[RMDB]
RNA sequence: GGGAACGACUCGAGUAGAGUCGAAAAGAUAUGGAGCAGAACUACACAUGGUGGGAUCAACAGCUCGGAAACGAGACAUGAUUAGUCAUGUGCUGCUCCUAAGUCAAAAGGCAAGUUCGCUUGCCAACGAACUGUACCUGUUCGCAGGUACAGUUCGAAAAGAAACAACAACAACAAC
Reactivity to 2A3 in 0.01 (KOAc 150mM, MgCl2 10mM, bicine 150mM(pH8.5), 24C), signal-to-noise 3, nucleotides 027 to 126: g020a010u060a040u190g000g000a020g030c010a000g030a100a030c160u300a050c300a020c010a010u020g010g090u060g080g300g010a010u000c010a010a160c040a170g000c000u010c030g000g010a070a110a020c010g000a010g030a040c030a130u070g000a000u010u010a010g070u020c010a000u000g000u010g000c000u000g000c000u010c000c000u010a000a000g010u010c040a020a080a000a020g010g010c010a010a000g020u080u190c180g030c180u010u010g000c000c000a000a000
Reactivity to DMS in 0.01 (KOAc 150mM, MgCl2 10mM, bicine 150mM(pH8.5), 24C), signal-to-noise 2, nucleotides 027 to 126: g010a030u020a300u030g000g000a020g010c000a000g010a050a060c130u000a300c010a000c000a000u000g000g000u010g010g000g010a000u000c000a020a020c290a100g010c010u000c010g000g010a030a090a140c000g010a010g010a100c060a150u010g000a000u000u000a300g000u000c000a000u000g020u000g000c000u000g000c000u000c020c000u000a010a040g050u010c090a090a070a080a080g000g000c010a030a000g000u000u000c190g000c000u000u000g010c000c000a020a070
The record gives the reactivity of an RNA of 177 nucleotides to 2A3 and DMS. The DMS profile rests on 1,319 reads. The reactions ran in a buffer of 150 mM KOAc, 10 mM MgCl2 and 150 mM bicine (pH 8.5), at 24 C.